[RMDB]
RNA sequence: GGGAACGACUCGAGUAGAGUCGAAAAGAGUGAGAUCCUGUCUCCAAAGAAAAAAGGGAAAACAAAAUGUAUCUUCCAUUUGUCACAUUGGUCUUUCAAUCAGAAGUAGUUAGACUGUUGACACUUUGCUCAAUCCUUCUUAACCACUAUGAGACGAUCAUCCCCUCAGUUUCGACUGAGGGGAUGAAAAAGAAACAACAACAACAAC
Reactivity to 2A3 in 0.01 (KOAc 150mM, MgCl2 10mM, bicine 150mM(pH8.5), 24C), signal-to-noise 2, nucleotides 027 to 156: g050a000g020u060g040a020g000a040u040c030c060u080g020u000c010u000c020c030a050a070a020g070a010a020a000a000a000a010g090g000g000a000a030a050a000c140a020a270a010a000u110g060u090a240u100c050u080u050c050c000a030u000u050u100g010u000c000a000c030a110u100u250g000g090u000c010u010u000u130c110a130a300u040c070a110g140a300a100g040u280a040g020u060u010a010g000a020c050u060g110u110u020g010a030c010a000c040u010u050u060g000c010u040c110a000a070u140c020c030u120u120c040u100u100a080a060c040c020a030c030u030a070u200g010a000g000a050c070g050a050